Background
Conditions: 150 mM KOAc, 10 mM MgCl2 and 150 mM bicine (pH 8.5), 24 C. The record gives the reactivity of an RNA of 177 nucleotides to DMS and 2A3.
RNA sequence: GGGAACGACUCGAGUAGAGUCGAAAACAACAGGGAGGUUGGUGGUGGACGAGCCACUCGCCAACCGGGUCAGGUCCGGAAGGAAGCAGCCCUAACGAGCCAGGCACGGGUGGCCGUGCCAGUACAACUCGUGACACUUAUUCGUAAGUGUCACGAGAAAAGAAACAACAACAACAAC
Reactivity to DMS in 0.01 (KOAc 150mM, MgCl2 10mM, bicine 150mM(pH8.5), 24C), signal-to-noise 2, nucleotides 027 to 126: c040a040a060c110a120g020g000g000a150g000g000u000u000g020g000u000g000g020u000g010g010a190c300g020a100g020c020c000a010c020u000c010g010c000c010a000a060c000c010g000g000g000u010c040a300g000g000u010c000c010g000g030a100a150g000g000a040a060g010c020a300g000c020c000c000u020a120a110c110g000a090g010c070c060a110g010g000c010a030c010g000g010g000u030g020g000c000c000g010u000g010c000c000a020g030u000a060c110a070a110
Reactivity to 2A3 in 0.01 (KOAc 150mM, MgCl2 10mM, bicine 150mM(pH8.5), 24C), signal-to-noise 1, nucleotides 027 to 126: c020a000a000c010a050g080g000g030a050g040g010u010u010g020g010u000g020g000u010g000g050a100c090g030a070g190c010c000a000c000u090c030g000c000c000a000a000c000c010g000g000g000u070c010a020g000g030u020c010c000g050g120a090a050g070g000a010a030g000c020a000g000c000c000c040u070a130a020c080g040a010g060c020c060a080g000g000c000a000c000g040g030g040u210g140g070c000c010g000u000g000c000c000a000g030u030a030c060a090a010

For 2A3, 2,167 sequencing reads were counted. DMS adducts were read by reverse transcription with MarathonRT.